An RNA of 177 nucleotides, treated with DMS and 2A3 and read out base by base. Conditions: 150 mM KOAc, 10 mM MgCl2 and 150 mM bicine (pH 8.5), 24 C. Values cover nucleotides 27 to 126.
RNA sequence: GGGAACGACUCGAGUAGAGUCGAAAACAGCGAGGAGGUCCCAGGCUGCCCAAGGGCGGGAGCCCGAGGUGAGUGAAACCACCGAGGUCUAGGGGCAACUCGGGCUAGGGCAGUCUAGCGGAACGGGCGUUAAGCUCCAAUUCGUUGGAGCUUAACGAAAAGAAACAACAACAACAAC
Reactivity to DMS in 0.01 (KOAc 150mM, MgCl2 10mM, bicine 150mM(pH8.5), 24C), signal-to-noise 4, nucleotides 027 to 126: c060a090g020c030g020a050g000g010a240g010g000u000c030c010c010a080g020g000c000u000g010c000c010c010a150a150g010g010g030c020g010g010g000a170g010c020c000c000g010a120g010g010u000g000a090g010u010g000a150a150a120c110c010a060c070c060g000a130g010g000u000c070u010a110g000g000g000g000c110a040a070c010u000c020g010g000g010c030u000a100g010g000g000c020a010g010u000c000u010a040g010c130g000g000a060a040c060g020g000g000
Reactivity to 2A3 in 0.01 (KOAc 150mM, MgCl2 10mM, bicine 150mM(pH8.5), 24C), signal-to-noise 1, nucleotides 027 to 126: c000a000g070c000g020a030g000g060a020g030g000u000c000c000c020a000g020g000c000u000g000c000c010c030a070a120g050g030g020c000g000g080g020a020g000c000c000c020g050a040g000g000u040g000a080g040u120g130a110a050a040c030c020a020c030c030g050a070g000g130u080c050u130a090g000g000g030g000c010a040a060c000u030c010g000g030g000c030u060a090g000g000g000c030a000g010u030c010u020a050g000c080g040g030a080a030c040g040g030g020